[RMDB]
RNA sequence: GGGAACGACUCGAGUAGAGUCGAAAAUAUGAUAUUUUCAAUUUCUAUGCUAUGCCAAAGUGUCUGACAUAAUCAAACAUUUGCGCAUUCUUUGACCAAGAAUAGUCAGCAAAUUGUAUUUUCAAUCACUCACUUCCAGAUUCGUCUGGAAGUGAGUAAAAGAAACAACAACAACAAC
Reactivity to DMS in 0.01 (KOAc 150mM, MgCl2 10mM, bicine 150mM(pH8.5), 24C), signal-to-noise 2, nucleotides 027 to 126: u000a040u020g010a100u000a040u000u000u020u000c030a080a100u020u000u000c020u000a080u010g020c130u000a020u000g010c010c010a050a070a070g010u000g030u010c060u000g000a040c120a070u010a110a110u010c060a030a030a010c060a060u000u000u000g000c070g020c000a040u000u000c000u000u000u110g000a150c290c140a100a050g000a040a020u010a080g010u000c050a040g000c020a030a020a030u000u010g010u020a050u000u000u020u000c090a040a120u010c200
Reactivity to 2A3 in 0.01 (KOAc 150mM, MgCl2 10mM, bicine 150mM(pH8.5), 24C), signal-to-noise 4, nucleotides 027 to 126: u290a110u100g070a050u040a110u110u050u030u050c020a040a010u040u060u050c020u070a060u080g020c000u040a030u070g020c010c030a170a020a040g080u080g010u030c090u060g070a070c020a120u230a060a150u180c120a080a050a040c020a030u010u000u000g000c020g000c000a000u010u000c000u000u020u130g020a040c040c000a020a000g000a020a030u130a050g130u270c100a010g020c020a010a030a050u060u070g040u030a140u020u060u000u010c060a070a060u120c020
The data come from the RNA Mapping Database (RMDB), libraries RFM100 and RFMREP. The record gives the reactivity of an RNA of 177 nucleotides to DMS and 2A3. Values cover nucleotides 27 to 126. The reactions ran in a buffer of 150 mM KOAc, 10 mM MgCl2 and 150 mM bicine (pH 8.5), at 24 C.